Conditions: 150 mM KOAc, 10 mM MgCl2 and 150 mM bicine (pH 8.5), 24 C. Chemical mapping of a 207-nucleotide RNA with 2A3 and DMS.
[RMDB]
RNA sequence: GGGAACGACUCGAGUAGAGUCGAAAAAGUGUAUUCGUACACUGGUUUGAUAUGGAGAGAGAAGAGCCGAGGAUCUAUACCGCCCAUAUCGGAAACGAUAUGUAACAAGUAUAGGGAGGCUCCUCUCUCCUAAGUCUUGCGAGGCGUUCGCGCCUAAGCCGGAAUUAUAAUUCGUUAUAAUUCCGGCAAAAGAAACAACAACAACAAC
Reactivity to 2A3 in 0.01 (KOAc 150mM, MgCl2 10mM, bicine 150mM(pH8.5), 24C), signal-to-noise 3, nucleotides 027 to 156: a010g020u020g000u030a070u100u210c280g030u050a010c000a000c020u040g060g060u030u070u080g030a010u020a020u070g010g000a000g000a010g000a000g010a300a090g000a040g000c030c000g010a210g020g000a000u000c000u010a000u010a000c040c040g090c030c050c010a000u000a000u000c000g020g020a010a020a000c010g000a000u000a010u000g040u020a090a080c080a290a050g000u000a000u000a000g000g010g000a000g000g000c010u010c000c000u010c000u000c000u010c000c000u000a000a000g000u010c010u030u090g050c020g120a040g000g000c010g040u070u090c170g010c000g030c140c010u060a080a000
Reactivity to DMS in 0.01 (KOAc 150mM, MgCl2 10mM, bicine 150mM(pH8.5), 24C), signal-to-noise 1, nucleotides 027 to 156: a030g040u000g020u000a060u010u020c260g030u000a020c000a000c000u010g000g030u000u000u010g010a150u000a080u000g010g030a060g030a070g000a050g000a110a080g030a030g030c000c040g000a110g010g000a050u010c010u010a030u000a000c000c020g020c300c200c000a020u000a000u000c000g020g000a160a090a200c000g030a020u000a010u010g010u000a100a060c060a100a040g010u000a040u000a010g010g010g000a090g010g060c030u000c000c000u000c010u000c000u000c010c000u000a000a030g000u010c010u010u000g000c030g000a020g010g010c000g000u000u000c100g030c060g030c070c010u000a030a280

It was measured as part of the RMDB library RNAMAK. Reactivities are given for positions 27 through 156. For 2A3, 1,776 sequencing reads were counted.